[RMDB]
An RNA of 177 nucleotides, treated with DMS and read out base by base.
It was measured as part of the RMDB library TTRINS.
Conditions: 150 mM KOAc, 10 mM MgCl2 and 150 mM bicine (pH 8.5), 24 C.
RNA sequence: GGGAACGACUCGAGUAGAGUCGAAAAGAUAUGGAGUGAUCUAAGCAGUCUCGAAGAACACGUUCAUCAUGUCGGAAACGACAUGAUGAACGUGGGAGAGACUGACCCUUAUCUCACUCCUAAGUCAGCUGUUAAGCAAGUUCGCUUGCUUAACAGCAAAAGAAACAACAACAACAAC
Reactivity to DMS in 0.01 (KOAc 150mM, MgCl2 10mM, bicine 150mM(pH8.5), 24C), signal-to-noise 1, nucleotides 027 to 126: g030a070u000a300u000g000g030a040g000u010g010a040u000c200u010a000a020g020c010a000g020u000c000u000c000g000a120a120g020a120a270c020a000c010g020u000u000c000a010u010c000a070u000g000u020c000g000g000a180a080a290c020g000a020c000a000u000g000a020u020g000a010a000c000g040u000g030g000g010a080g000a000g010a020c000u010g010a060c120c230c030u000u000a000u020c190u000c000a060c040u000c000c000u000a000a160g010u020c030a210